[RMDB]
RNA sequence: GGGAACGACUCGAGUAGAGUCGAAAAAGGAAAAUACACUAGAGCUAGCGAAGGAUUAUAUUGUCAUCACAUAAGCGAAGACAAAUUCCAAAACUUAUCUGACCUAAGAUUCAUUUCCGAAUUUAAGGAACAUGAACUCUUUCGAGAGUUCAUGUUCAAAAGAAACAACAACAACAAC
Reactivity to DMS in 0.01 (KOAc 150mM, MgCl2 10mM, bicine 150mM(pH8.5), 24C), signal-to-noise 2, nucleotides 027 to 126: a060g000g030a070a050a070a040u000a110c140a050c050u010a060g000a070g010c150u000a040g000c010g030a080a270g000g000a040u010u000a110u010a070u000u000g000u010c020a100u010c010a010c030a180u010a100a150g000c080g000a010a100g000a010c040a030a030a110u000u010c010c010a030a020a120a020c030u000u000a020u000c010u010g010a100c100c080u000a030a040g000a080u000u010c060a090u010u010u020c010c000g000a100a060u000u020u000a060a160g010
Reactivity to 2A3 in 0.01 (KOAc 150mM, MgCl2 10mM, bicine 150mM(pH8.5), 24C), signal-to-noise 2, nucleotides 027 to 126: a000g080g000a100a060a040a000u140a020c050a010c100u040a020g020a020g230c090u010a020g000c040g050a090a070g030g000a020u040u130a100u060a100u180u090g020u020c020a050u010c000a050c020a120u240a170a080g060c040g040a010a010g020a010c000a020a060a060u090u000c020c010a060a060a000a000c030u070u020a020u000c020u030g050a090c010c030u050a120a020g060a060u110u070c040a050u140u000u000c010c010g030a000a070u120u110u120a160a070g140
Chemical mapping of a 177-nucleotide RNA with DMS and 2A3. Values are in units of 0.01, from 0 to 300, in steps of 10. For 2A3, 1,093 sequencing reads were counted. 2A3 adducts were read by reverse transcription with SuperScript II with manganese.